RNA sequence: GGGAACGACUCGAGUAGAGUCGAAAAUCACGAGUUCGCUCGUGAAAAAAACCGUAGGAAUCGGAACUACGUGACAACAUUCGAAGAACUUCGAAAGAGGGGAGAAUGCUAAUCACGCCGAUUCCUAAACGGAAAAACAUCUGCUUCGGCAGAUGAACUGCUAGAACAGUUUCGACUGUUCUAGCAGAAAAGAAACAACAACAACAAC
Reactivity to DMS in 0.01 (KOAc 150mM, MgCl2 10mM, bicine 150mM(pH8.5), 24C), signal-to-noise 1, nucleotides 027 to 156: u000c000a000c040g010a020g030u030u010c300g000c050u000c000g100u000g000a000a000a040a130a090a060a130c020c000g090u000a030g010g030a050a000u010c020g030g000a090a120c010u010a300c030g050u030g000a010c000a030a030c000a030u010u000c010g000a170a070g010a200a240c030u000u000c000g000a130a130a300g060a020g000g010g000g000a240g000a030a000u010g000c000u000a120a080u010c000a030c000g000c000c000g000a000u000u000c010c000u000a000a000a080c000g010g000a100a050a080a120a230c000a010u000c010u000g000c000u000u010c300g020g000c040a030g000a010u030g000a070a130
Reactivity to 2A3 in 0.01 (KOAc 150mM, MgCl2 10mM, bicine 150mM(pH8.5), 24C), signal-to-noise 2, nucleotides 027 to 156: u020c000a000c000g010a000g030u090u050c160g090c180u010c020g020u000g000a060a000a000a000a000a000a000c010c000g010u010a000g010g000a000a000u000c020g050g000a100a060c130u290a030c300g030u030g010a000c020a040a000c010a050u000u030c000g120a240a050g000a030a030c000u010u010c010g060a110a050a060g000a010g000g030g010g000a000g000a020a000u000g020c010u180a210a100u030c000a000c020g000c010c000g000a000u000u010c000c000u000a000a000a000c000g000g080a100a000a020a000a010c000a000u030c000u010g000c000u000u040c190g110g000c000a000g010a010u020g000a020a060